[RMDB]
An RNA of 177 nucleotides, treated with 2A3 and read out base by base. The RNA was probed in 150 mM KOAc, 10 mM MgCl2 and 150 mM bicine (pH 8.5) at 24 C. For 2A3 the reverse transcriptase was SuperScript II with manganese. It was measured as part of the RMDB library RFM100. High 2A3 reactivity points to a flexible backbone, as in loops and unpaired stretches.
RNA sequence: GGGAACGACUCGAGUAGAGUCGAAAACAAGAAUUUGCCCGGUAGCGUAUAAGCAAAACACAAAUCUAUCCAUGCAAGCAUUUACCGCUGGUGAACCGGCGGUUUUUUUUGCCUGCCAUCCAGACAACCAGUCUGGAUGCUUCGGCAUCCAGACUGGAAAAGAAACAACAACAACAAC
Reactivity to 2A3 in 0.01 (KOAc 150mM, MgCl2 10mM, bicine 150mM(pH8.5), 24C), signal-to-noise 1, nucleotides 027 to 126: c000a010a000g080a110a160u020u000u020g000c000c040c000g050g110u070a010g010c000g040u040a010u040a270a060g000c010a030a030a160a000c020a040c000a000a070a080u100c040u120a000u000c050c020a130u260g000c030a030a030g000c000a020u040u040u040a010c020c040g040c000u000g000g020u050g150a170a300c000c000g010g000c000g020g000u060u000u000u000u000u000u070u100g000c000c010u050g000c000c000a030u030c000c000a000g010a190c000a000a150